[RMDB]
Background
Structure probing data (2A3 and DMS) for a 177-nucleotide construct.
RNA sequence: GGGAACGACUCGAGUAGAGUCGAAAAGAUAUGGAGAAUGCUUGGGAGCUCGCUAUCGGAAACGAUAGAGUGGAGCUUUGAUCAAGCCAUUCUCCUAAGUCAAAAGCGUGACCUUCGGGUCACGCAAGAUAGAGAUUCACUUCGGUGAAUCUCUAUCAAAAGAAACAACAACAACAAC
Reactivity to 2A3 in 0.01 (KOAc 150mM, MgCl2 10mM, bicine 150mM(pH8.5), 24C), signal-to-noise 1, nucleotides 027 to 126: g000a020u100a060u150g000g000a010g000a030a000u050g000c010u020u000g000g000g040a040g000c000u000c010g000c010u010a010u020c000g010g080a170a040a020c030g000a000u010a000g090a040g150u300g160g030a000g000c000u100u100u030g030a060u050c010a010a030g100c120c000a040u060u010c000u000c000c000u010a060a010g040u000c040a000a000a200a090g020c020g010u000g020a020c000c000u050u080c300g110g000g000u000c000a000c000g000c020a010a000
Reactivity to DMS in 0.01 (KOAc 150mM, MgCl2 10mM, bicine 150mM(pH8.5), 24C), signal-to-noise 1, nucleotides 027 to 126: g000a020u000a300u020g020g000a010g000a010a040u000g000c020u010u000g010g000g000a020g040c010u000c010g000c010u000a000u010c010g000g010a090a060a160c000g010a010u000a010g000a010g000u030g010g000a010g010c000u000u000u000g000a130u020c000a030a030g010c160c160a070u000u000c010u000c000c000u000a010a050g010u000c060a170a110a120a180g000c000g040u000g020a010c000c000u000u000c230g020g000g000u010c010a000c000g020c000a000a010
DMS adducts were read by reverse transcription with MarathonRT. For DMS, 1,574 sequencing reads were counted.